[RMDB]
RNA sequence: GGGAACGACUCGAGUAGAGUCGAAAAUGUUCAGAUCACUCAUAACAGCUUUUUUCACUUUCUUGAAAGGAAGGGGUUGCCCCAAAUAUGUAGCCUCCCAAUGUGCCAUAAAGAUCCAAGGCACAAGGGCUUAUGUAUCUUUCGAGAUACAUAAGCCAAAAGAAACAACAACAACAAC
Reactivity to 2A3 in 0.01 (KOAc 150mM, MgCl2 10mM, bicine 150mM(pH8.5), 24C), signal-to-noise 2, nucleotides 027 to 126: u050g030u040u090c010a010g010a100u040c040a000c050u070c000a060u030a130a070c030a060g000c050u130u060u060u030u080u110c070a020c120u020u080u120c050u100u190g070a080a030a080g010g020a050a030g040g010g000g000u060u020g070c000c000c000c000a030a140a070u140a030u080g060u040a030g060c010c010u010c000c000c000a020a070u080g020u010g000c030c010a100u150a090a190a000g050a010u030c060c030a010a010g010g060c000a020c000a000a020g050
Reactivity to DMS in 0.01 (KOAc 150mM, MgCl2 10mM, bicine 150mM(pH8.5), 24C), signal-to-noise 2, nucleotides 027 to 126: u010g000u000u000c050a110g000a070u000c030a060c070u000c050a060u010a050a120c050a070g000c030u000u000u000u010u010u020c030a080c010u000u020u000c050u000u000g020a050a120a100g010g020a040a040g010g000g000g020u000u010g000c020c020c020c080a070a080a080u000a060u010g010u000a040g010c020c030u020c010c030c020a050a060u000g010u000g010c000c030a080u010a050a100a090g010a080u010c090c130a080a140g000g020c010a000c040a050a070g000